Structure probing data (2A3 and DMS) for a 177-nucleotide construct. For DMS, 3,393 sequencing reads were counted. Reactivities are given for positions 27 through 126.

RNA sequence: GGGAACGACUCGAGUAGAGUCGAAAACGCCUCGCCUCCCACCUGCGCAAGCUGCGUAAGCGGCUCCUCCGCGAUGCCGAUGACCUGCAGAAGCGCCUGGCAGUGUACCAGGCCGGGGCCCGCGAGGGCUUGCUAACCGGUUCGCCGGUUAGCAAGCAAAAGAAACAACAACAACAAC
Reactivity to 2A3 in 0.01 (KOAc 150mM, MgCl2 10mM, bicine 150mM(pH8.5), 24C), signal-to-noise 1, nucleotides 027 to 126: c030g050c010c010u010c010g000c020c010u010c040c000c000a050c010c020u070g020c030g010c070a150a150g040c050u050g010c040g030u010a060a100g030c010g020g010c030u030c020c020u180c060c040g090c160g030a030u160g010c000c000g010a020u050g080a060c010c070u110g000c010a010g020a130a030g030c010g000c060c000u000g030g000c060a120g090u060g020u270a120c000c000a000g000g010c000c020g000g020g000g000c000c020c010g000c020g020a010g020g040
Reactivity to DMS in 0.01 (KOAc 150mM, MgCl2 10mM, bicine 150mM(pH8.5), 24C), signal-to-noise 3, nucleotides 027 to 126: c160g010c010c000u000c040g020c020c050u000c030c010c030a170c050c040u000g020c060g010c070a110a100g010c030u000g020c040g010u010a160a130g030c020g000g000c030u000c030c030u000c100c090g000c070g010a060u010g020c020c020g000a100u010g000a120c270c060u000g010c050a060g010a120a140g010c070g020c010c010u000g000g010c050a160g000u020g010u010a080c030c030a020g000g020c040c050g010g000g020g000c020c010c070g000c060g020a080g010g010